The record gives the reactivity of an RNA of 207 nucleotides to 2A3 and DMS. Conditions: 150 mM KOAc, 10 mM MgCl2 and 150 mM bicine (pH 8.5), 24 C.

[RMDB]
RNA sequence: GGGAACGACUCGAGUAGAGUCGAAAAAGGUUCUUCGGAACCUACCGCGAUAUGGACCCAUUGUCAGCCUGUAAGUUGGCGUUGAAAUCGGAAACGAUGGAGCCAAUUGAGGGCUUGGAUUUAUGGGUCCUAAGUCUUAAUAGUAUUUCGAUACUAACCGUUACACGAAAUUCGUUUCGUGUAACGGAAAAGAAACAACAACAACAAC
Reactivity to 2A3 in 0.01 (KOAc 150mM, MgCl2 10mM, bicine 150mM(pH8.5), 24C), signal-to-noise 2, nucleotides 027 to 156: a010g030g000u040u030c030u090u110c290g050g000a000a000c000c010u020a030c030c000g020c030g020a010u030a040u130g010g000a020c020c010c000a000u000u030g000u030c030a000g000c000c000u130g080u230a020a020g070u000u000g000g020c020g120u160u030g030a010a010a010u000c000g000g120a030a060a030c010g000a000u000g000g000a000g000c000c010a010a000u010u060g050a050g000g030g050c010u000u080g000g000a020u040u300u180a030u030g000g040g050u020c000c000u000a000a000g000u000c000u020u260a160a120u070a070g000u000a050u090u240u020c170g130a030u100a080c130u180a110a100
Reactivity to DMS in 0.01 (KOAc 150mM, MgCl2 10mM, bicine 150mM(pH8.5), 24C), signal-to-noise 1, nucleotides 027 to 156: a100g040g000u010u000c000u000u000c300g080g000a000a030c040c000u000a040c060c030g030c140g000a130u000a140u010g000g040a010c020c000c000a090u000u000g030u010c020a080g020c000c020u010g000u020a230a150g030u000u020g000g010c010g000u000u000g000a080a160a060u010c000g000g020a250a090a270c050g030a010u000g010g020a300g000c000c000a010a050u000u000g000a300g030g010g010c000u040u000g010g000a000u010u010u010a020u000g000g050g000u000c000c000u000a020a030g000u000c000u000u090a090a210u010a180g020u000a300u000u000u000c040g000a210u000a050c090u000a060a190
For DMS, 1,671 sequencing reads were counted.
For DMS the reverse transcriptase was MarathonRT.
DMS (dimethyl sulfate) methylates the pairing face of unpaired adenines and cytosines.
2A3 adducts were read by reverse transcription with SuperScript II with manganese.
The data come from the RNA Mapping Database (RMDB), library RNAMAK.
For 2A3, 964 sequencing reads were counted.